Record summary: Structure probing data (2A3) for a 207-nucleotide construct. The data come from the RNA Mapping Database (RMDB), library ARCHII. Conditions: 150 mM KOAc, 10 mM MgCl2 and 150 mM bicine (pH 8.5), 24 C.
RNA sequence: GGGAACGACUCGAGUAGAGUCGAAAACGCGUCAACCGGAGGAAUCGGCCAGGUCCGGAAGGGAGCAACCGUGUCCGGCCGUCCGCGUUCACCGGUCACCGGUGUGAGAAAGGCUGGGGGUAAAUCUAGAGAGGAAAGGAUCAUGGCAUAAGGGGGCGAUACGUAGAACCUUCGGGUUCUACGUAUCAAAAGAAACAACAACAACAAC
Reactivity to 2A3 in 0.01 (KOAc 150mM, MgCl2 10mM, bicine 150mM(pH8.5), 24C), signal-to-noise 2, nucleotides 027 to 156: c030g030c030g020u010c030a050a050c020c010g020g010a080g060g030a080a070u090c020g000g000c010c020a120g030g050u020c020c000g020g020a060a070g070g010g000a090g030c060a060a020c010c000g050u040g060u040c010c000g000g010c010c020g010u000c010c020g040c010g000u050u060c030a030c020c010g000g040u160c080a070c060c050g010g010u010g020u020g050a080g090a040a080a000g050g020c060u070g000g000g000g000g030u050a050a090a030u040c060u130a100g020a010g020a000g060g030a060a030a040g010g000a040u050c030a080u130g040g000c010a020u030a160a120g020g000g000g000g000c020